Overview:
This 207-nucleotide RNA was probed chemically with 2A3 and DMS. For DMS the reverse transcriptase was MarathonRT. Reactivities are given for positions 27 through 156.
RNA sequence: GGGAACGACUCGAGUAGAGUCGAAAACGUGUCCGUCGACGUAGCCGACAACAUGCCCAGGUAGCCCAGACCUUCAAGGCUACGGUGCGUUGCGACGCACGGUCUGAUUCUUCACAACGACGUUCACAAGAUCGGAUCACUUUCGAGUGAUCCGAAACAGUGCCUAGAGUUUCGACUCUAGGCACUGAAAAGAAACAACAACAACAAC
Reactivity to 2A3 in 0.01 (KOAc 150mM, MgCl2 10mM, bicine 150mM(pH8.5), 24C), signal-to-noise 3, nucleotides 027 to 156: c070g000u020g000u050c140c100g010u000c020g020a030c060g080u150a040g090c030c000g030a030c020a070a000c010a130u110g020c010c000c010a010g040g030u040a040g010c000c080c100a030g010a020c010c000u000u020c030a030a000g000g010c000u010a010c020g000g000u000g000c000g020u030u090g060c130g110a010c000g000c000a000c000g010g000u010c000u010g020a040u110u090c050u100u150c120a040c040a230a050c090g140a040c020g050u100u100c050a050c020a120a070g040a120u030c000g000g000a000u010c000a000c010u050u070u130c200g090a000g010u000g000a000u000c000c000g000a000a000a000
Reactivity to DMS in 0.01 (KOAc 150mM, MgCl2 10mM, bicine 150mM(pH8.5), 24C), signal-to-noise 1, nucleotides 027 to 156: c030g110u000g000u000c000c000g050u000c030g020a030c000g000u000a130g060c010c030g020a150c070a080a030c030a130u000g010c060c030c030a090g000g030u010a070g000c010c020c200a140g000a120c050c030u010u000c060a120a290g010g000c000u000a060c000g000g030u000g030c000g000u030u010g050c100g050a120c010g030c010a040c010g000g000u000c010u020g010a190u010u000c100u010u030c010a100c040a080a150c020g020a100c010g000u010u000c020a080c030a070a200g010a220u000c000g000g000a020u000c000a010c000u020u000u000c200g030a020g030u000g010a010u000c000c000g020a000a000a040